Structure probing data (DMS) for a 177-nucleotide construct.
[RMDB]
RNA sequence: GGGAACGACUCGAGUAGAGUCGAAAACGGCUUGGCGGAGAUUGCUACACCGCGCACACUCUGGGUAAUGCCAAUAUCAUCUGCCACCCAGGAACCUGAAGCCAUUGCAUUCAAUGGCAAUAUUCCAAAAACGGUCAGAUUUCGAUCUGACCGUUUUAAAAGAAACAACAACAACAAC
Reactivity to DMS in 0.01 (KOAc 150mM, MgCl2 10mM, bicine 150mM(pH8.5), 24C), signal-to-noise 1, nucleotides 027 to 126: c140g000g070c190u010u000g050g070c000g000g010a070g000a050u010u020g000c060u000a100c190a060c080c100g000c100g000c200a080c050a100c100u000c170u030g000g000g010u000a080a040u000g000c090c240a030a090u000a020u000c120a070u000c080u000g000c010c080a070c300c000c040a140g000g000a030a100c170c040u020g040a120a070g010c000c030a080u000u000g000c290a120u000u020c020a000a000u000g000g000c000a030a070u000a110u000u000c000c040a060